[RMDB]
RNA sequence: GGGAACGACUCGAGUAGAGUCGAAAAUGAGUGAACGCGGCAACUGAUAAACGCAACCGACACGGAUGCAACGGUGACCGACGCCGAGAUCGAGGCCUUCUUUGCUGAAGAGGCUGCCGCUCUCGUCUGAAGGAACCAGCCUGGCUCAGCGUGCUGCCCUUAAGUACACCUUCGGGUGUACUUAAGGAAAAGAAACAACAACAACAAC
Reactivity to DMS in 0.01 (KOAc 150mM, MgCl2 10mM, bicine 150mM(pH8.5), 24C), signal-to-noise 2, nucleotides 027 to 156: u020g010a110g000u020g010a060a050c080g030c030g020g020c030a120a160c050u020g020a150u000a070a060a160c050g010c030a150a060c000c010g020a130c050a300c050g030g030a070u000g010c010a070a040c040g020g000u000g020a200c030c020g000a300c280g020c110c020g010a030g020a030u000c010g000a300g030g020c010c050u030u000c020u000u000u000g040c260u000g020a020a070g020a080g010g000c010u010g000c010c050g000c080u010c000u010c020g000u000c090u020g040a130a140g000g020a220a020c010c010a060g030c020c020u000g020g030c090u000c010a040g020c010g060u010g000c020u010g030c020
Reactivity to 2A3 in 0.01 (KOAc 150mM, MgCl2 10mM, bicine 150mM(pH8.5), 24C), signal-to-noise 4, nucleotides 027 to 156: u190g010a040g070u100g050a130a020c080g010c030g040g000c010a020a020c060u070g030a060u120a090a120a030c070g000c030a050a030c010c020g130a150c090a060c270g030g020a030u070g000c020a040a060c120g000g030u020g030a110c010c000g000a020c010g000c020c000g000a020g000a010u040c020g010a020g030g000c030c000u290u160c020u060u120u140g230c170u250g020a000a010g010a000g040g000c040u070g200c210c020g010c000u000c000u000c010g020u000c030u040g030a060a010g010g010a010a020c020c010a010g040c000c020u050g030g000c020u000c030a020g010c060g090u050g000c010u020g000c000